The record gives the reactivity of an RNA of 207 nucleotides to 2A3 and DMS. The data come from the RNA Mapping Database (RMDB), library OK3TST. Reactivities are given for positions 27 through 156.

RNA sequence: GGGAACGACUCGAGUAGAGUCGAAAAUUAGACCAAUGGAUGAAUGAGGAAAUUGAAUGUGACAUCUCUGCUUAAACUAAGUGAAUUUUUCUAAACUUAGAAAUCCUUCUAUACCAUUCAUCUUGAAAAUUUUGAAGCUCCUUAAUAUGCUUUUAGACUAGCGUAUACUGUUCGCAGUAUACGCUAGAAAAGAAACAACAACAACAAC
Reactivity to 2A3 in 0.01 (KOAc 150mM, MgCl2 10mM, bicine 150mM(pH8.5), 24C), signal-to-noise 2, nucleotides 027 to 156: u090u010a030g050a050c040c000a010a030u050g030g000a010u000g020a000a010u030g040a140g120g090a220a040a040u110u050g030a100a030u140g120u190g030a080c050a120u230c070u000c060u230g100c040u070u120a080a100a000c010u000a020a020g030u000g050a050a120u080u080u030u200u000c040u040a120a130a060c010u040u020a010g010a000a110a030u020c000c000u000u020c050u050a070u010a090c010c010a000u000u000c010a000u000c000u000u030g050a000a070a020a070u130u150u030u200g080a030a020g000c020u080c100c000u090u100a090a000u100a170u260g000c030u030u130u000u050a130g070a110
Reactivity to DMS in 0.01 (KOAc 150mM, MgCl2 10mM, bicine 150mM(pH8.5), 24C), signal-to-noise 1, nucleotides 027 to 156: u000u000a100g010a300c030c090a110a150u000g010g000a030u020g000a030a040u000g010a170g000g010a140a060a170u000u010g000a050a070u000g070u010g000a000c060a250u000c030u000c030u000g060c040u000u000a040a080a080c050u020a040a020g000u000g020a130a140u000u020u000u000u000c050u010a090a070a020c030u010u020a040g010a100a220a130u000c020c040u010u000c000u000a230u000a160c030c010a010u010u000c000a050u000c010u000u030g000a070a030a010a110u010u000u000u000g050a070a050g030c050u000c060c050u000u040a000a130u010a070u010g020c000u010u000u010u010a120g010a300